[RMDB]
RNA sequence: GGGAACGACUCGAGUAGAGUCGAAAAGAUAUGGAAUCCCAUAGACUUUUGACGAGCUCCGGUCGGAAACGACCGAGAGCUCGAUAAGUCUAGGGAUUCCUAAGUCAAAGUGGUGUUCGCACCACAAGUUUCAGAACAAGUUCGCUUGUUCUGAAACAAAAGAAACAACAACAACAAC
Reactivity to 2A3 in 0.01 (KOAc 150mM, MgCl2 10mM, bicine 150mM(pH8.5), 24C), signal-to-noise 1, nucleotides 027 to 126: g020a000u070a020u220g010g010a030a000u000c040c030c000a040u030a000g030a020c030u040u140u260u300g230a190c050g000a010g030c030u070c030c000g010g060u030c000g000g020a070a130a000c020g000a010c000c080g010a010g020a010g120c010u020c000g000a000u010a010a020g000u000c000u000a010g040g000g000a000u000u000c000c000u020a050a000g000u040c060a100a070a150g000u000g000g000u020g010u110u180c300g050c070a020c020c000a000c000a020a020
Reactivity to DMS in 0.01 (KOAc 150mM, MgCl2 10mM, bicine 150mM(pH8.5), 24C), signal-to-noise 2, nucleotides 027 to 126: g010a040u000a300u000g000g000a000a040u000c010c000c000a170u000a000g000a010c000u000u000u000u010g020a300c190g000a030g010c000u000c010c030g000g020u000c010g000g020a150a070a200c000g010a020c020c000g010a060g030a020g040c010u020c000g010a000u000a000a010g020u000c000u010a010g010g010g000a010u000u000c000c000u000a010a070g010u000c030a080a130a200g040u000g010g020u010g020u000u000c200g020c040a020c000c000a000c010a070a120

The record gives the reactivity of an RNA of 177 nucleotides to 2A3 and DMS. The reactions ran in a buffer of 150 mM KOAc, 10 mM MgCl2 and 150 mM bicine (pH 8.5), at 24 C.